An RNA of 207 nucleotides, treated with 2A3 and read out base by base. For 2A3 the reverse transcriptase was SuperScript II with manganese. Source: RMDB library M2RFPK, as collected in RNAgym.
[RMDB]
RNA sequence: GGGAACGACUCGAGUAGAGUCGAAAACAACACGUCCUCGUCGUACAGAGUGGUAUCAUGUGUCACCACAUAUCCAAGCUUGGGUACACGGGCUUGACCCAACCCCUUGGGCGGAUGGUGGCACAUGAAAAGAAGUAACACUUCGGUGUUACUUCAAGAGUGCUGUCGAGUUCGCUCGACAGCACUCAAAAGAAACAACAACAACAAC
Reactivity to 2A3 in 0.01 (KOAc 150mM, MgCl2 10mM, bicine 150mM(pH8.5), 24C), signal-to-noise 1, nucleotides 027 to 156: c050a010a030c010a000c030g160u060c000c000u050c100g090u040c070g070u090a080c080a060g060a070g040u120g010g100u090a100u090c000a000u000g000u000g000u000c000a010c000c000a020c010a150u170a050u000c000c000a000a000g020c020u030u040g010g010g010u000a000c000a010c030g030g020g000c020u280u300g240a300c000c000c000a000a000c010c000c000c000u000u000g010g000g000c010g010g000a050u030g010g000u000g000g000c020a000c000a000u000g000a000a000a000a030g010a000a000g000u000a000a000c000a000c010u050u040c300g090g000u020g040u000u000a000c010u000u020c000a030a010